Description: The record gives the reactivity of an RNA of 177 nucleotides to 2A3 and DMS. Source: RMDB library OK1LIB, as collected in RNAgym. For 2A3, 23,383 sequencing reads were counted. The reactions ran in a buffer of 150 mM KOAc, 10 mM MgCl2 and 150 mM bicine (pH 8.5), at 24 C. For 2A3 the reverse transcriptase was SuperScript II with manganese.
[RMDB]
RNA sequence: GGGAACGACUCGAGUAGAGUCGAAAAGAAGGAGAUGAAAGCGACUUUAGAAUCGGCUAACUGAGCAGUCAGAUCCAGACGGCAAGUAUCGUCGCCAGAGAUACAGUCGCAAAUAGCCGUAGGAGAACCAUUAAUUUAUGUUCGCAUAAAUUAAUGGAAAAGAAACAACAACAACAAC
Reactivity to 2A3 in 0.01 (KOAc 150mM, MgCl2 10mM, bicine 150mM(pH8.5), 24C), signal-to-noise 9, nucleotides 027 to 126: g120a050a020g070g030a070g020a060u150g070a070a070a020g040c010g030a020c010u070u110u080a080g040a110a100u070c020g000g000c020u020a050a040c030u040g030a020g050c020a030g040u020c010a020g020a120u070c060c010a020g020a040c010g010g000c020a080a070g020u040a060u140c080g040u040c030g060c050c020a030g010a000g000a060u030a050c030a010g040u040c010g000c020a010a080a010u070a030g020c010c010g020u020a040g030g120a070g030a040a030
Reactivity to DMS in 0.01 (KOAc 150mM, MgCl2 10mM, bicine 150mM(pH8.5), 24C), signal-to-noise 9, nucleotides 027 to 126: g010a090a070g010g010a110g000a080u000g010a070a100a100g010c030g010a120c040u000u010u010a070g000a150a100u010c040g000g000c000u010a080a090c050u010g000a090g020c110a030g010u000c020a060g010a120u020c100c140a100g000a080c020g000g000c030a110a090g010u010a030u010c040g000u020c090g000c080c070a080g010a090g010a050u000a020c040a080g000u000c040g000c060a030a060a080u020a070g020c020c010g010u010a070g000g010a100g000a100a190